An RNA of 177 nucleotides, treated with DMS and 2A3 and read out base by base. 2A3 adducts were read by reverse transcription with SuperScript II with manganese. DMS adducts were read by reverse transcription with MarathonRT.
[RMDB]
RNA sequence: GGGAACGACUCGAGUAGAGUCGAAAAGAAAGAAGAGAAUUUGGUCAACUCCUUGGUCACAGCUGGACAUGGGCAGGUCGACAACUUUUCACUAGGAGUCUUGGGAAUGGCAUUGUUCCUGGAGGAAGGAGUACUAAAUAUUCGUAUUUAGUACUCCAAAAGAAACAACAACAACAAC
Reactivity to DMS in 0.01 (KOAc 150mM, MgCl2 10mM, bicine 150mM(pH8.5), 24C), signal-to-noise 9, nucleotides 027 to 126: g010a060a070a080g000a060a140g000a070g010a060a060u010u010u020g010g000u010c040a080a090c040u010c020c010u000u020g010g010u000c030a070c080a060g010c070u010g000g000a080c100a070u030g010g010g010c050a070g000g010u010c030g000a060c090a060a080c110u000u020u010u020c060a060c080u020a030g010g000a070g000u010c040u010u010g000g000g000a050a060u020g000g020c060a100u010u010g010u000u000c010c000u000g000g010a090g010g010a120a120
Reactivity to 2A3 in 0.01 (KOAc 150mM, MgCl2 10mM, bicine 150mM(pH8.5), 24C), signal-to-noise 9, nucleotides 027 to 126: g090a010a050a010g080a050a010g040a010g030a070a090u080u070u090g070g010u060c030a050a080c030u040c010c010u040u080g030g000u040c020a020c020a090g030c050u080g020g020a020c010a100u090g020g000g030c030a030g020g060u040c020g020a020c020a050a050c030u070u060u070u080c070a060c060u020a020g070g020a030g040u010c010u060u070g030g000g020a060a070u060g050g000c050a060u020u130g010u040u020c010c010u030g030g030a040g030g020a070a090